Structure probing data (DMS and 2A3) for a 177-nucleotide construct. The data come from the RNA Mapping Database (RMDB), library OK1LIB. For DMS the reverse transcriptase was MarathonRT. Conditions: 150 mM KOAc, 10 mM MgCl2 and 150 mM bicine (pH 8.5), 24 C. For 2A3, 817 sequencing reads were counted.
RNA sequence: GGGAACGACUCGAGUAGAGUCGAAAAGGACGGGGUCAGCCUUGCAUAGGUUCAAGUCUGCCAGAUACAGCGAAGGAGGGUAUUCUUCUGUAUGCCCGAACCUCCUCUCUCAUAUUUCUGUUAGUAAAUCCAUGGAGCCAUUCGUGGCUCCAUGGAUAAAAGAAACAACAACAACAAC
Reactivity to DMS in 0.01 (KOAc 150mM, MgCl2 10mM, bicine 150mM(pH8.5), 24C), signal-to-noise 1, nucleotides 027 to 126: g070g010a230c130g000g020g010g060u010c030a010g000c050c020u000u010g000c060a220u000a130g000g000u000u010c000a050a070g000u020c000u000g000c040c040a160g040a080u000a010c040a100g030c300g010a040a030g000g000a010g010g020g030u020a050u000u010c000u010u000c060u000g000u000a000u000g000c070c010c000g000a020a080c030c030u000c150c000u000c120u000c000u010c010a170u030a050u020u000u000c030u020g000u020u010a010g000u040a060a040
Reactivity to 2A3 in 0.01 (KOAc 150mM, MgCl2 10mM, bicine 150mM(pH8.5), 24C), signal-to-noise 2, nucleotides 027 to 126: g040g010a000c030g000g010g030g000u080c070a000g040c000c020u000u000g030c020a120u060a300g020g010u040u030c000a000a000g020u020c010u020g090c000c000a010g030a020u100a060c020a030g040c050g060a040a000g010g010a030g030g130g030u200a090u040u020c010u010u000c000u040g130u070a030u030g010c000c000c010g020a090a080c000c000u000c000c010u000c000u010c000u000c000a070u060a140u040u230u030c090u020g060u070u030a130g000u130a050a120